[RMDB]
RNA sequence: GGGAACGACUCGAGUAGAGUCGAAAACAAGAGCAAACUAACUGUAAUACUAGUUCCUUAGCUUAUUACGAACCUGUGCAGGGUCGUAAAAUGCUGAUGGCUCUUCUUUCUGAUAAUGCCUAUCUCAACAUCCCCGGCUUCGGCCGGGGAAAAAGAAACAACAACAACAAC
Reactivity to DMS in 0.01 (KOAc 150mM, MgCl2 10mM, bicine 150mM(pH8.5), 24C), signal-to-noise 1, nucleotides 027 to 129: c050a000a000g000a020g050c040a050a170a120c050u000a070a070c090u000g000u090a100a000u120a110c090u040a150g120u040u030c150c000u000u000a020g000c020u030u000a130u010u050a000c000g000a000a060c000c000u000g010u000g080c110a000g030g000g000u000c030g030u270a000a000a000a000u030g000c020u040g060a020u040g030g190c020u000c010u040u050c220u060u000u000c040u050g000a020u020a020a080u020g070c040c000u090a000u000c040u000c000a090a060c180a120
Reactivity to 2A3 in 0.01 (KOAc 150mM, MgCl2 10mM, bicine 150mM(pH8.5), 24C), signal-to-noise 2, nucleotides 027 to 129: c000a000a010g000a000g050c000a140a020a010c110u110a080a050c030u080g030u130a070a020u080a090c150u060a010g000u000u000c000c000u000u050a000g000c010u060u000a030u000u000a040c000g020a040a110c030c020u000g010u030g200c190a070g000g000g030u000c000g000u000a000a000a100a000u080g000c000u000g020a080u130g080g010c000u000c000u000u060c000u010u000u010c050u000g010a060u090a080a080u170g000c000c000u010a000u010c040u030c010a070a050c000a070